Source: RMDB library OK3TST, as collected in RNAgym. An RNA of 207 nucleotides, treated with DMS and read out base by base. The RNA was probed in 150 mM KOAc, 10 mM MgCl2 and 150 mM bicine (pH 8.5) at 24 C. For DMS the reverse transcriptase was MarathonRT. Reactivities are rounded to 0.1 and cut off at 0 and 3.
[RMDB]
RNA sequence: GGGAACGACUCGAGUAGAGUCGAAAAGCUGGGUUUACAGUCGCCCGUCACCAUGCCUGGCUAAUUUUUGUAUUUUUAGUAGAGAUGGGGAUGUCACCAUGUUGGCCAGGGUGGUCUCGAACUCCUGACCUCAAGCAAUCCGCCCACCUUGGCCUCAUAAUUAAAUGCCUUUCGAGGCAUUUAAUUAAAAAGAAACAACAACAACAAC
Reactivity to DMS in 0.01 (KOAc 150mM, MgCl2 10mM, bicine 150mM(pH8.5), 24C), signal-to-noise 1, nucleotides 027 to 156: g020c010u000g020g010g010u000u000u000a060c050a090g050u000c070g010c010c040c040g010u000c000a030c030c010a110u000g020c000c010u000g030g020c000u000a020a030u000u010u000u000u010g000u000a040u000u000u000u010u000a120g030u000a050g010a050g010a060u000g010g040g040g010a120u000g020u000c040a050c050c040a120u010g020u000u010g010g030c010c010a040g020g020g030u000g000g000u000c020u000c050g020a060a070c020u000c050c010u000g000a090c050c050u020c060a030a070g010c070a060a070u000c040c060g010c190c000c000a040c060c030u000u000g010g020c010c010u000c010a060